[RMDB]
RNA sequence: GGGAACGACUCGAGUAGAGUCGAAAAACGACCUAUGUACGCAUAGGUCGAAUCGGGUCCGGUUCCCGACCUUCGAGCCAUUCGAAGGGUCGAUCCGGCGCCCACGACCUAGCUACGGCUAGGUCGAGACGGCUGGUGGUUUCGACCACCAGCCGUCAAAAGAAACAACAACAACAAC
Reactivity to 2A3 in 0.01 (KOAc 150mM, MgCl2 10mM, bicine 150mM(pH8.5), 24C), signal-to-noise 1, nucleotides 027 to 126: a000c010g020a000c000c000u000a030u000g010u050a040c200g010c140a010u000a020g000g000u000c000g000a000a070u100c060g000g000g020u010c010c000g030g000u030u030c050c000c030g000a020c000c000u000u000c020g010a100g120c180c070a230u080u010c000g000a000a030g090g000g000u000c010g000a000u030c000c000g030g030c170g000c040c010c000a000c030g000a000c010c000u000a000g010c000u000a020c280g090g000c000u000a010g000g000u000c000g000a030
Description
The record gives the reactivity of an RNA of 177 nucleotides to 2A3. For 2A3, 735 sequencing reads were counted.